[RMDB]
RNA sequence: GGGAACGACUCGAGUAGAGUCGAAAAGUGAAAGCUCCUUCUCUCGAAAUGUGUAACUCAUGAUUCUCAUGACCCCUGGUUGGAGAGAUCCGGACUAGGAGCCAGGGGGCCUCUGAUUCUGCCAGCCAAAACUGUCGUAAGUUCGCUUACGACAGAACGUACCUAAUGACUUCGGUCAUUAGGUACGAAAAGAAACAACAACAACAAC
Reactivity to 2A3 in 0.01 (KOAc 150mM, MgCl2 10mM, bicine 150mM(pH8.5), 24C), signal-to-noise 3, nucleotides 027 to 156: g060u060g040a100a010a060g020c020u040c000c020u050u020c020u010c010u010c030g050a010a100a080u070g080u020g030u070a050a030c000u010c030a020u050g080a150u180u010c060u020c080a020u070g040a090c010c000c000c010u020g010g010u060u060g090g000a130g020a020g000a100u030c020c060g000g070a090c050u090a100g080g010a010g000c010c000a000g000g000g000g010g000c000c000u020c010u010g030a120u120u020c020u030g010c010c020a030g050c020c020a010a060a070a150c010u000g000u000c000g000u010a000a000g000u010u080c180g010c130u000u000a000c000g000a020c000a000g000a000a010

Annotation
Chemical mapping of a 207-nucleotide RNA with 2A3. The RNA was probed in 150 mM KOAc, 10 mM MgCl2 and 150 mM bicine (pH 8.5) at 24 C. For 2A3 the reverse transcriptase was SuperScript II with manganese.